RNA sequence: GGGAACGACUCGAGUAGAGUCGAAAAGGGAAGUGAAACCUGCUUCCCACGCACCAUGGUGUUUUUGACUUGGCAUGAACCCAUCUCUUGGGUGCUGCUGGCAGCUAAUACGCCGCUGCUGGUGCUGAGCGAGAUAUAUAUUCGUAUAUAUCUCGCUAAAAGAAACAACAACAACAAC
Reactivity to 2A3 in 0.01 (KOAc 150mM, MgCl2 10mM, bicine 150mM(pH8.5), 24C), signal-to-noise 9, nucleotides 027 to 126: g020g000g010a030a010g030u080g100a260a080a090c020c030u040g000c000u010u000c000c000c000a010c040g000c000a010c010c000a050u090g000g010u040g030u040u080u030u070u110g130a150c030u060u130g020g000c010a040u100g070a040a020c010c000c010a050u080c160u040c060u170u050g020g000g000u030g050c010u020g000c010u010g050g040c020a010g000c010u040a060a020u070a100c040g030c040c020g030c080u130g020c050u030g020g000u010g000c070u070g060
Reactivity to DMS in 0.01 (KOAc 150mM, MgCl2 10mM, bicine 150mM(pH8.5), 24C), signal-to-noise 9, nucleotides 027 to 126: g010g010g010a040a030g020u010g000a090a120a160c160c060u000g000c080u000u000c000c000c000a120c180g000c010a020c000c010a040u010g000g010u000g010u000u000u000u000u000g010a080c030u000u010g010g010c010a030u010g010a050a020c010c000c000a050u010c300u010c210u000u000g010g000g010u000g000c050u000g000c000u000g010g020c220a030g010c040u000a050a050u000a030c070g010c050c040g010c170u010g020c300u000g000g010u000g010c020u000g000
Structure probing data (2A3 and DMS) for a 177-nucleotide construct. The DMS profile rests on 52,233 reads. Conditions: 150 mM KOAc, 10 mM MgCl2 and 150 mM bicine (pH 8.5), 24 C. For 2A3 the reverse transcriptase was SuperScript II with manganese.